The record gives the reactivity of an RNA of 177 nucleotides to 2A3 and DMS. The reactions ran in a buffer of 150 mM KOAc, 10 mM MgCl2 and 150 mM bicine (pH 8.5), at 24 C.
RNA sequence: GGGAACGACUCGAGUAGAGUCGAAAAGAACUCACCAGCAAAUGUUUACGACAAGAUUCGACAUUUGCAAAUUACGUAGCGAUCUUCCAGAAUCUUGUCGAAACCUUCCCAAUCGCUACGCCCUAAAGAUUAGAGACUUAUUCGUAAGUCUCUAAUCAAAAGAAACAACAACAACAAC
Reactivity to 2A3 in 0.01 (KOAc 150mM, MgCl2 10mM, bicine 150mM(pH8.5), 24C), signal-to-noise 6, nucleotides 027 to 126: g030a050a040c030u030c090a070c040c030a020g060c040a030a070a100u110g020u040u090u090a060c020g000a000c000a010a010g000a020u020u030c020g030a020c100a170u160u150u180g030c020a050a020a020u120u070a030c010g000u000a010g010c000g010a020u020c050u200u050c150c030a020g020a010a010u010c000u010u000g000u000c000g030a060a010a000c000c000u010u010c010c010c000a010a000u010c030g000c000u010a010c000g010c020c010c000u150a130a100a010
Reactivity to DMS in 0.01 (KOAc 150mM, MgCl2 10mM, bicine 150mM(pH8.5), 24C), signal-to-noise 7, nucleotides 027 to 126: g010a120a100c090u010c090a080c080c070a110g000c050a050a050a060u000g000u000u010u000a300c040g000a010c000a010a010g010a030u010u000c000g030a130c240a090u000u000u000g010c100a060a060a080u010u010a060c030g020u000a020g010c010g000a020u000c110u010u010c160c140a090g010a010a000u000c000u000u000g000u000c010g000a010a060a060c140c110u000u000c000c000c000a130a030u000c010g000c000u000a010c010g000c030c030c020u000a050a090a100